RNA sequence: GGGAACGACUCGAGUAGAGUCGAAAAGCUGAGUAUACGAGCUUAGUUCAUUCUCGUAUGCAUGAUUGGACAAAUUAAAAUCUCAAUUUGGAUCAGGGCCUCCCUCCAGCGACGGCCGAACAUACAAUUCUUUGGUAGGUUUCGACCUACCAAAGAAAAAAGAAACAACAACAACAAC
Reactivity to DMS in 0.01 (KOAc 150mM, MgCl2 10mM, bicine 150mM(pH8.5), 24C), signal-to-noise 2, nucleotides 027 to 126: g020c020u000g010a170g010u000a000u000a010c060g000a010g040c230u010u000a100g000u000u000c200a070u000u000c000u000c000g010u000a000u010g000c040a060u010g000a050u000u000g000g000a070c050a000a030a050u000u010a060a080a120a130u000c150u010c110a070a010u000u000u000g010g000a140u010c010a050g020g000g010c000c020u000c010c000c010u000c060c050a000g020c000g000a090c130g000g000c000c000g000a030a060c080a020u000a110c220a000a100